Chemical mapping of a 177-nucleotide RNA with DMS and 2A3. In probing experiments dimethyl sulfate is read out at A N1 and C N3, which are open when not base-paired. The reactions ran in a buffer of 150 mM KOAc, 10 mM MgCl2 and 150 mM bicine (pH 8.5), at 24 C. For 2A3, 1,869 sequencing reads were counted. Values cover nucleotides 27 to 126. The DMS profile rests on 3,810 reads. It was measured as part of the RMDB library RFMREP.

[RMDB]
RNA sequence: GGGAACGACUCGAGUAGAGUCGAAAAUCACUGUUUCUUAUAGCGGUGGUUUAAACAGAGGUGCAAACAGCAAGCGGAUCUUGUCGCCUUUGGGGGGCUGUGGCCGUGCCCCUCAAAGUGAAUUUGGCAAUACACAGCUGUUCGCAGCUGUGUAUUGAAAAGAAACAACAACAACAAC
Reactivity to DMS in 0.01 (KOAc 150mM, MgCl2 10mM, bicine 150mM(pH8.5), 24C), signal-to-noise 3, nucleotides 027 to 126: u010c000a030c030u010g010u010u010u010c210u020u020a110u010a050g010c010g020g020u010g010g010u000u000u010a040a090a090c120a070g000a080g000g010u010g010c050a070a060a080c080a080g020c060a080a060g010c030g000g010a070u010c070u000u000g010u000c050g000c080c010u000u000u000g000g000g000g010g010g010c020u010g010u000g020g010c030c030g010u000g000c000c000c000c000u010c000a010a010a010g000u000g010a050a120u000u000u000g010g020
Reactivity to 2A3 in 0.01 (KOAc 150mM, MgCl2 10mM, bicine 150mM(pH8.5), 24C), signal-to-noise 2, nucleotides 027 to 126: u020c000a000c020u010g040u000u060u040c190u120u260a160u220a150g020c030g040g000u020g000g000u020u030u080a040a000a000c040a000g060a020g060g060u070g010c030a060a070a070c010a080g010c010a110a010g050c020g060g020a030u020c000u050u100g030u080c040g050c020c020u000u000u000g000g000g010g010g000g000c020u050g010u080g100g010c000c020g050u020g000c010c000c000c000u000c000a000a000a000g010u030g030a000a030u140u080u170g050g000